[RMDB]
RNA sequence: GGGAACGACUCGAGUAGAGUCGAAAAAGCGACGCUACGGCGUCGCAGAAUAGAUUAAUGAUGAUAACCUAGCCUUGAACUCUCUCUCUGACUAGAUGAUGGAAAAUACAAGGUCUGAUCUAUUCAAUGUGAAAUGAUGGUUCGCCAUCAUUUCACAAAAAGAAACAACAACAACAAC
Reactivity to 2A3 in 0.01 (KOAc 150mM, MgCl2 10mM, bicine 150mM(pH8.5), 24C), signal-to-noise 4, nucleotides 027 to 126: a000g000c000g000a000c000g010c000u020a040c250g110g000c010g000u000c000g000c000a000g000a000a010u010a010g040a030u070u050a180a110u170g170a040u090g040a030u050a120a030c000c000u010a010g000c000c000u010u030g050a090a020c000u020c000u010c020u000c000u000c020u060g080a190c120u240a050g010a090u150g000a030u040g030g080a070a120a030a040u180a090c020a000a000g020g050u040c050u020g010a000u000c000u000a010u000u010c010a040a010
Reactivity to DMS in 0.01 (KOAc 150mM, MgCl2 10mM, bicine 150mM(pH8.5), 24C), signal-to-noise 2, nucleotides 027 to 126: a070g070c010g010a040c000g010c010u000a130c240g010g000c000g000u010c000g050c000a000g000a020a010u000a040g000a000u010u000a050a130u020g000a140u000g000a150u000a130a150c040c000u010a100g000c000c000u000u000g000a110a100c180u000c090u010c250u000c110u010c000u030g000a210c220u000a050g000a000u050g000a010u000g000g000a000a040a060a120u020a140c010a020a020g000g000u000c060u000g000a000u000c000u000a000u010u000c030a110a190
This 177-nucleotide RNA was probed chemically with 2A3 and DMS. For DMS the reverse transcriptase was MarathonRT. Values cover nucleotides 27 to 126. For 2A3 the reverse transcriptase was SuperScript II with manganese. The data come from the RNA Mapping Database (RMDB), libraries RFM100 and RFMREP. The reactions ran in a buffer of 150 mM KOAc, 10 mM MgCl2 and 150 mM bicine (pH 8.5), at 24 C.